[RMDB]
RNA sequence: GGGAACGACUCGAGUAGAGUCGAAAAGGUGAUUGUGAUACUCGCUACUGUCAUUCAUCGAAUGACAGUAUUAGACUGGUACAAUCACAUUACGUGACUCAAUUAUUUACCAGUCUAAUUGAUAACAUAACGCGAGAUAUGUUAAAGUCACGUAUCGGGGGAUAAUUACUUUCGAGUAAUUAUCCCCAAAAGAAACAACAACAACAAC
Reactivity to 2A3 in 0.01 (KOAc 150mM, MgCl2 10mM, bicine 150mM(pH8.5), 24C), signal-to-noise 4, nucleotides 027 to 156: g090g000u020g000a000u000u000g020u010g040a010u040a040c020u010c000g000c010u020a010c000u020g010u000c000a000u010u000c040a140u160c250g020a000a000u000g000a000c000a000g000u000a010u000u010a000g000a000c000u000g010g000u030a000c000a000a000u000c000a000c000a020u020u080a010c010g000u000g010a000c000u030c110a100a160u140u070a100u090u280u080a030c000c000a010g000u000c000u000a000a010u020u060g080a030u050a150a040c030a070u100a070a010c080g010c000g000a010g030a060u020a010u020g020u020u060a140a110a020g000u000c000a000c000g010u000a020u120c060g080
Reactivity to DMS in 0.01 (KOAc 150mM, MgCl2 10mM, bicine 150mM(pH8.5), 24C), signal-to-noise 2, nucleotides 027 to 156: g030g050u000g010a030u010u000g000u000g030a200u010a080c030u010c050g100c030u000a050c000u010g000u000c000a000u000u010c000a260u010c170g010a030a020u010g000a020c000a010g000u000a010u000u000a040g010a010c000u000g000g000u010a050c030a040a030u010c000a000c020a150u000u000a010c000g010u010g020a020c020u000c110a070a140u000u000a100u010u010u010a060c000c010a050g010u000c010u000a030a020u000u000g010a260u010a020a130c110a090u000a040a060c080g040c020g000a020g000a220u000a020u010g050u000u010a100a070a150g010u000c000a010c000g030u010a080u000c070g020
An RNA of 207 nucleotides, treated with 2A3 and DMS and read out base by base. The reactions ran in a buffer of 150 mM KOAc, 10 mM MgCl2 and 150 mM bicine (pH 8.5), at 24 C. 2A3 adducts were read by reverse transcription with SuperScript II with manganese.